[RMDB]
RNA sequence: GGGAACGACUCGAGUAGAGUCGAAAAUUUAAGCUUGGUCAGGAGGGCGCUCAGGGCGGCGACGUUGGUCGGGCCGUCGUUGGUCAGGGCGUUGGCUCGAUGGCGGGCGAGGACGGGCGAGGGGCUCCUGAGCUAAAUGGUUCGCCAUUUAGCUCAGAAAAGAAACAACAACAACAAC
Reactivity to 2A3 in 0.01 (KOAc 150mM, MgCl2 10mM, bicine 150mM(pH8.5), 24C), signal-to-noise 1, nucleotides 027 to 126: u020u050u080a040a030g040c040u060u120g090g000u100c010a020g000g070a000g000g010g020c060g040c060u020c060a050g110g000g000c050g030g020c000g000a010c050g050u020u030g060g030u040c000g000g030g000c000c000g010u010c000g010u020u050g080g250u040c100a090g020g010g000c000g040u040u080g030g010c010u000c010g070a070u090g000g000c030g010g000g080c010g020a060g020g030a060c030g000g000g000c040g000a050g030g020g020g000c040u070c030
Reactivity to DMS in 0.01 (KOAc 150mM, MgCl2 10mM, bicine 150mM(pH8.5), 24C), signal-to-noise 1, nucleotides 027 to 126: u010u010u000a040a150g020c070u000u000g040g010u010c060a090g030g000a090g010g020g010c050g020c040u000c060a120g020g000g010c020g020g000c020g000a050c030g000u000u010g010g020u000c050g000g000g020c100c000g000u010c020g000u000u000g010g000u000c040a080g010g000g010c030g010u020u000g020g020c010u010c030g010a050u000g000g010c060g020g010g000c050g010a090g000g000a050c100g000g000g010c060g000a100g010g000g000g040c090u020c080

Notes
The data come from the RNA Mapping Database (RMDB), library OK2TST. The record gives the reactivity of an RNA of 177 nucleotides to 2A3 and DMS. DMS adducts were read by reverse transcription with MarathonRT. For 2A3 the reverse transcriptase was SuperScript II with manganese. The RNA was probed in 150 mM KOAc, 10 mM MgCl2 and 150 mM bicine (pH 8.5) at 24 C.